[RMDB]
RNA sequence: GGGAACGACUCGAGUAGAGUCGAAAAGAUAUGGAAAUAACGAGAAACGUUCGGAAACGAACGAAUUUCGAUGAGUUGAUUCCUAAGUCAUGAUAGAUUGAUCAGCUUUCGAGCUGAUCAAUCUAAAUCAAUGGAUGUGCUUCGGCACAUCCAUUGAAAAAGAAACAACAACAACAAC
Reactivity to DMS in 0.01 (KOAc 150mM, MgCl2 10mM, bicine 150mM(pH8.5), 24C), signal-to-noise 2, nucleotides 027 to 126: g040a100u020a200u010g010g020a100a090a120u000a060a250c020g000a040g000a030a020a300c010g030u000u000c000g010g000a090a090a250c000g010a010a000c000g010a030a110u010u010u000c000g000a060u010g010a030g010u000u000g000a190u000u010c000c010u000a000a140g030u010c200a060u000g010a190u010a010g010a000u000u000g000a030u000c010a000g000c000u000u000u000c250g010a010g000c000u000g050a010u000c000a000a000u000c010u000a010a040a110